RNA sequence: GGGAACGACUCGAGUAGAGUCGAAAAAUUUAACGUACGGUUUGGACAUAAUGGAGAAAUAAAAUAUUGCUCUUUUUGCAGCGGAGCUGAACUUUAUGUUCUCUUUGCUAGCCAUAAGUGUAAAACACUUACCACUCCUAUUCGUAGGAGUGGUAAGAAAAGAAACAACAACAACAAC
Reactivity to DMS in 0.01 (KOAc 150mM, MgCl2 10mM, bicine 150mM(pH8.5), 24C), signal-to-noise 5, nucleotides 027 to 126: a060u020u020u010a060a030c060g020u000a040c130g010g010u000u000u000g010g020a110c040a060u020a050a030u030g010g000a050g010a040a040a040u030a040a030a040a070u020a100u020u010g010c010u010c000u000u010u000u020u020g020c120a070g000c190g010g000a010g000c100u000g010a030a070c110u000u030u010a050u040g010u000u000c000u000c010u000u010u020g000c020u020a080g000c030c040a040u000a010a030g010u000g000u010a040a050a080a100c190a130
Reactivity to 2A3 in 0.01 (KOAc 150mM, MgCl2 10mM, bicine 150mM(pH8.5), 24C), signal-to-noise 8, nucleotides 027 to 126: a010u180u180u090a080a020c040g010u070a010c020g030g100u030u080u110g100g050a050c040a070u220a110a100u220g060g020a060g050a050a050a030u130a010a070a030a020u160a100u070u130g010c000u010c000u030u080u020u060u120g040c030a040g010c020g040g010a010g010c100u000g010a010a000c010u060u160u120a080u230g120u010u000c000u000c000u010u020u030g020c010u010a020g010c000c010a020u040a060a050g010u020g020u090a020a080a010a020c060a010

Structure probing data (DMS and 2A3) for a 177-nucleotide construct. For 2A3 the reverse transcriptase was SuperScript II with manganese. It was measured as part of the RMDB libraries RFM100 and RFMREP.